Chemical mapping of a 177-nucleotide RNA with 2A3 and DMS.

RNA sequence: GGGAACGACUCGAGUAGAGUCGAAAACGUUAGCGCGAUAGCAUUUAUAAUGUACGCGUUAAUGAGUAGGAGGGCGUGAAGGUCGUGAAGAAGCUCGUGGCGUGAGCCUGAGUGAAACGGCCUUUAGGUGCGAAGUGUAUUUCGAUACACUUCGCACAAAAGAAACAACAACAACAAC
Reactivity to 2A3 in 0.01 (KOAc 150mM, MgCl2 10mM, bicine 150mM(pH8.5), 24C), signal-to-noise 3, nucleotides 027 to 126: c010g060u000u010a000g000c000g010c010g050a120u070a100g040c020a020u030u090u070a300u180a230a050u020g000u010a030c000g020c000g010u000u000a000a010u010g020a000g020u050a010g040g020a050g030g070g040c120g010u070g030a020a010g000g000u000c000g000u020g090a140a120g070a050a010g060c000u020c070g300u080g010g000c010g030u100g040a010g020c020c010u020g000a000g040u120g040a160a050a000c000g000g000c010c000u000u010u000a030g000
Reactivity to DMS in 0.01 (KOAc 150mM, MgCl2 10mM, bicine 150mM(pH8.5), 24C), signal-to-noise 1, nucleotides 027 to 126: c040g020u000u010a020g050c000g000c000g000a130u010a200g000c000a010u000u010u030a130u030a140a030u000g050u000a080c000g000c000g050u000u000a020a020u000g000a120g000u000a080g000g010a090g020g010g010c100g010u000g000a030a020g000g010u000c010g020u000g010a080a130g000a140a300g000c000u000c020g020u020g010g010c000g000u020g000a180g010c000c020u000g000a020g000u000g000a050a110a010c020g000g000c000c000u000u000u000a050g020